[RMDB]
RNA sequence: GGGAACGACUCGAGUAGAGUCGAAAAGAUAUGGAACGAAUCCGUGAACUACGCUUAAGAGUCGGAAACGACUUUAAGGCGCACGGACUAUUCCUAAGUCAAAGUACGCCUGUUCGCAGGCGUACAAGUCAGGGUUACAGUUCGCUGUAACCCUGACAAAAGAAACAACAACAACAAC
Reactivity to DMS in 0.01 (KOAc 150mM, MgCl2 10mM, bicine 150mM(pH8.5), 24C), signal-to-noise 2, nucleotides 027 to 126: g020a100u010a300u030g010g000a010a000c060g040a090a220u010c000c010g050u000g000a120a080c130u010a300c020g000c010u010u000a130a130g000a010g010u000c010g010g010a030a050a220c020g000a000c000u000u000u000a130a150g020g010c000g000c000a010c000g000g000a000c040u000a260u010u010c000c010u000a040a180g030u000c020a120a060a120g010u000a010c010g000c000c000u000g000u020u010c150g010c030a030g000g000c020g010u000a010c060a010a080
Reactivity to 2A3 in 0.01 (KOAc 150mM, MgCl2 10mM, bicine 150mM(pH8.5), 24C), signal-to-noise 2, nucleotides 027 to 126: g030a020u080a010u220g040g010a000a020c050g040a250a270u000c000c000g000u010g010a030a060c100u250a070c300g000c030u070u040a110a030g020a000g080u000c030g000g070a000a050a050c020g000a000c000u070u000u070a050a020g010g030c050g000c030a000c000g000g060a000c000u030a060u030u000c000c000u020a130a000g050u040c080a270a000a050g010u000a000c000g000c000c020u010g020u040u020c300g010c140a000g000g020c010g010u010a000c000a000a000
This 177-nucleotide RNA was probed chemically with DMS and 2A3.
For 2A3, 2,784 sequencing reads were counted.
The DMS profile rests on 1,098 reads.
2A3 adducts were read by reverse transcription with SuperScript II with manganese.